[RMDB]
RNA sequence: GGGAACGACUCGAGUAGAGUCGAAAAACUCAAAGUAGGCGUACAAAUCUUGCCCAAGGCAUUUCCCUGGACGUAAGCGAUGAUCCGAAAGGUAGCGACCAAAUGAGUAUGGAACAGGGCCAACUUCGAGCUUAAACGAUUUCGAUCGUUUAAGCUCAAAAGAAACAACAACAACAAC
Reactivity to DMS in 0.01 (KOAc 150mM, MgCl2 10mM, bicine 150mM(pH8.5), 24C), signal-to-noise 4, nucleotides 027 to 126: a060c020u000c010a020a090a080g020u010a090g010g020c030g020u030a080c070a050a100a100u000c070u000u020g000c010c000c040a120a070g010g000c050a080u000u000u020c030c020c010u010g020g020a050c100g010u020a070a170g010c020g000a060u030g010a080u020c020c000g010a070a080a080g000g000u000a050g000c010g000a100c010c030a040a080a130u010g000a030g020u010a060u000g010g010a040a050c060a060g010g010g000c030c040a070a070c090u010u020c300
Reactivity to 2A3 in 0.01 (KOAc 150mM, MgCl2 10mM, bicine 150mM(pH8.5), 24C), signal-to-noise 6, nucleotides 027 to 126: a000c020u010c020a050a010a000g060u070a020g070g020c010g010u050a020c040a040a280a030u050c020u070u160g020c000c030c040a040a040g030g010c020a020u030u050u040c000c000c000u000g040g020a010c020g050u090a060a060g010c010g070a120u020g020a010u050c010c010g040a050a020a010g040g020u010a000g000c010g020a030c010c030a030a030a030u110g020a020g020u080a100u100g060g030a070a040c060a090g000g010g030c010c020a060a070c040u100u110c060
The record gives the reactivity of an RNA of 177 nucleotides to DMS and 2A3. Reactivities are given for positions 27 through 126. High DMS reactivity at an A or C suggests that its Watson-Crick edge is free.